[RMDB]
RNA sequence: GGGAACGACUCGAGUAGAGUCGAAAAAAUGAGAAUCAUUAUUACGUCACUCAACUGGUCGCGAGAUCAGCCGGUAAGCUGAGAGACCCACGCAGUCGGACUCUUCAGAUUAUCUCCUCAUCAGGCUACAGUUCCAGACAUUCGUGUCUGGAACUGUAAAAGAAACAACAACAACAAC
Reactivity to 2A3 in 0.01 (KOAc 150mM, MgCl2 10mM, bicine 150mM(pH8.5), 24C), signal-to-noise 2, nucleotides 027 to 126: a000a000u080g000a040g070a070a140u040c140a070u060u160a020u000u220a100c140g060u000c100a050c050u000c050a060a170c000u000g010g010u030c000g010c040g030a050g000a150u020c000a000g010c050c000g000g000u060a000a000g000c000u030g020a020g000a030g000a070c000c070c000a070c020g270c070a080g020u100c040g000g030a110c040u000c000u110u100c040a000g000a000u000u020a020u010c010u070c000c000u080c010a060u010c060a040g030g040c030u000